[RMDB]
RNA sequence: GGGAACGACUCGAGUAGAGUCGAAAAGGAUUGUUCACCCACUAAUAGGGAACGUGAGCUGGGUUUAGACCGUCGUGAGACAGGUUAGUUUUACCCUACUGAUGAGUUCGUUGUCUAAACAGUAAUCCGUGAAUGGUAUCUUCGGAUACCAUUCACGAAAAGAAACAACAACAACAAC
Reactivity to DMS in 0.01 (KOAc 150mM, MgCl2 10mM, bicine 150mM(pH8.5), 24C), signal-to-noise 2, nucleotides 027 to 126: g000g000a110u010u020g010u020u000c120a130c030c000c070a190c100u000a060a220u020a140g000g020g000a110a040c110g000u000g000a050g010c060u000g020g040g010u000u010u010a080g010a010c010c010g030u000c010g000u010g000a200g020a070c010a030g070g000u010u010a050g020u030u020u010u010a060c030c000c000u000a050c030u020g000a090u010g030a060g000u010u010c050g000u000u000g000u000c010u000a030a010a070c140a070g020u030a060a060u010c080
Reactivity to 2A3 in 0.01 (KOAc 150mM, MgCl2 10mM, bicine 150mM(pH8.5), 24C), signal-to-noise 2, nucleotides 027 to 126: g060g000a110u010u060g030u090u080c050a070c020c010c000a020c070u140a030a170u090a090g000g000g010a030a050c040g070u070g050a070g000c080u070g020g000g000u010u110u100a080g000a000c000c000g090u000c010g010u040g050a160g010a040c050a060g040g000u020u010a000g010u000u020u090u040a020c000c020c000u040a100c020u020g240a300u080g050a050g040u050u070c010g000u070u010g130u030c010u040a100a040a000c060a040g060u050a030a020u010c050